[RMDB]
RNA sequence: GGGAACGACUCGAGUAGAGUCGAAAAGUUAGGUUUAUGGGCUACCAGUAAGCGAAAAAUGAUACAGGACGAAAAAAACAUAAUUCGAGAUUUUUCAGGAUGGAUUUUUUUAGGUAUCUAUCAAAACCUCCAAUUGUGAAUUCGUUCACAAUUGGAGAAAAGAAACAACAACAACAAC
Reactivity to 2A3 in 0.01 (KOAc 150mM, MgCl2 10mM, bicine 150mM(pH8.5), 24C), signal-to-noise 3, nucleotides 027 to 126: g050u060u090a010g020g070u000u080u040a050u110g050g040g000c000u010a020c020c000a030g040u070a090a010g020c030g070a030a020a000a060a080u080g000a020u030a060c030a030g110g040a030c030g070a010a000a010a000a080a010a000c080a090u250a150a080u100u100c060g020a020g060a280u010u140u000u130u180c050a030g020g040a020u020g020g060a060u000u000u000u000u030u080u060a040g050g000u070a000u000c000u000a030u050c090a010a020a010a100c010
Reactivity to DMS in 0.01 (KOAc 150mM, MgCl2 10mM, bicine 150mM(pH8.5), 24C), signal-to-noise 2, nucleotides 027 to 126: g020u000u000a020g000g000u000u000u020a130u030g000g000g000c050u010a030c000c030a110g020u010a020a110g030c090g010a030a040a040a040a080u010g030a050u000a040c040a070g020g000a160c080g020a000a000a050a010a030a090a110c110a000u040a040a040u000u020c100g010a110g020a220u000u020u020u030u000c030a120g000g010a010u000g000g020a030u010u000u010u080u000u040u030a050g000g010u000a020u000c010u000a030u010c090a080a040a140a090c140